[RMDB]
RNA sequence: GGGAACGACUCGAGUAGAGUCGAAAAGCUGACGGAUAACGUGGUGUUAUAGAUAUAUAUUUUACGUCAUAAUAAUAUCAUAGCUCGCGAAAUAUAUAUAUCGUAGCUAAAUUCUUAUCGUCAGCGACAUAUAAAUCAGGUUCGCCUGAUUUAUAUGAAAAGAAACAACAACAACAAC
Reactivity to DMS in 0.01 (KOAc 150mM, MgCl2 10mM, bicine 150mM(pH8.5), 24C), signal-to-noise 4, nucleotides 027 to 126: g000c000u000g000a020c010g000g010a010u000a000a020c240g010u000g000g010u010g010u000u000a010u000a100g010a010u000a020u000a020u000a020u000u000u000u000a050c010g010u000c030a080u010a100a080u000a080a110u000a280u010c060a090u010a100g010c200u000c120g030c000g010a020a030a040u000a030u000a020u000a030u000a040u000c020g010u010a010g000c000u000a110a070a070u000u000c110u000u000a020u000c010g000u000c000a000g010c000g010a100
Reactivity to 2A3 in 0.01 (KOAc 150mM, MgCl2 10mM, bicine 150mM(pH8.5), 24C), signal-to-noise 5, nucleotides 027 to 126: g000c010u000g000a000c020g180g060a030u000a020a010c060g000u030g010g080u070g040u040u040a030u110a160g030a000u020a000u010a000u010a040u030u040u040u090a080c010g020u020c050a000u060a230a050u130a090a050u110a090u170c070a060u090a100g050c120u090c120g000c010g030a000a060a000u140a000u000a010u000a010u010a010u050c020g000u010a000g000c010u020a060a100a080u160u040c020u020u010a010u010c000g000u000c000a000g010c010g000a000
This 177-nucleotide RNA was probed chemically with DMS and 2A3. DMS adducts were read by reverse transcription with MarathonRT. The reactions ran in a buffer of 150 mM KOAc, 10 mM MgCl2 and 150 mM bicine (pH 8.5), at 24 C. In probing experiments dimethyl sulfate is read out at A N1 and C N3, which are open when not base-paired. It was measured as part of the RMDB library OK2TRN.